Record summary:
Conditions: 150 mM KOAc, 10 mM MgCl2 and 150 mM bicine (pH 8.5), 24 C. The record gives the reactivity of an RNA of 177 nucleotides to 2A3. 2A3 is a SHAPE reagent: it acylates the 2'-hydroxyl of flexible nucleotides of all four kinds. Reactivities are rounded to 0.1 and cut off at 0 and 3. Source: RMDB library OK1LIB, as collected in RNAgym. Reactivities are given for positions 27 through 126. For 2A3, 595 sequencing reads were counted.
[RMDB]
RNA sequence: GGGAACGACUCGAGUAGAGUCGAAAAUUGCUAUCGACCAGGCCGAAGUCCCACAUGUCGGUAACAUACGCGCUGUCAAGGGACACCUCGGUUACUUGUGGAACUCCUCGUGUUUGACUAAGCGCGAGCCUCCCGGAAGUUUCGACUUCCGGGAGGCAAAAGAAACAACAACAACAAC
Reactivity to 2A3 in 0.01 (KOAc 150mM, MgCl2 10mM, bicine 150mM(pH8.5), 24C), signal-to-noise 1, nucleotides 027 to 126: u160u180g010c050u050a000u000c000g060a000c000c000a050g010g000c050c010g100a030a030g060u020c000c060c000a040c000a000u080g010u020c050g010g000u020a210a000c020a060u170a050c110g000c000g000c150u050g010u000c010a060a110g010g000g000a000c000a000c030c030u050c000g000g000u100u070a060c130u190u070g000u040g050g000a060a050c030u060c000c000u060c010g040u000g080u050u170u200g150a080c030u070a040a050g000c000g070c000g000a000